[RMDB]
RNA sequence: GGGAACGACUCGAGUAGAGUCGAAAACACCUUCAGCAGGCACAUCACAAGUAUUCAGCAAGCGUUCAGGACCAAGGUUGCUCGGAUGUCUUGGCUCAUUGCACCACGCAACAAACUGUCGCUUGGCGGGAGGAGCACUCUUCGGAGUGCUCCUCCCAAAAGAAACAACAACAACAAC
Reactivity to 2A3 in 0.01 (KOAc 150mM, MgCl2 10mM, bicine 150mM(pH8.5), 24C), signal-to-noise 1, nucleotides 027 to 126: c120a050c020c000u050u090c060a120g000c010a020g060g080c020a000c000a070u140c000a070c000a140a050g060u040a070u090u030c010a010g070c000a000a000g010c000g030u080u040c020a070g010g010a010c000c040a020a000g060g050u000u000g030c000u000c030g070g010a080u120g100u130c010u100u090g060g050c070u040c020a040u010u090g000c010a000c070c000a020c140g000c000a000a000c060a060a060a000c000u040g000u030c000g000c010u010u160g000g000c030

Chemical mapping of a 177-nucleotide RNA with 2A3. 2A3 is a SHAPE reagent: it acylates the 2'-hydroxyl of flexible nucleotides of all four kinds. Source: RMDB library OK1LIB, as collected in RNAgym. The reactions ran in a buffer of 150 mM KOAc, 10 mM MgCl2 and 150 mM bicine (pH 8.5), at 24 C.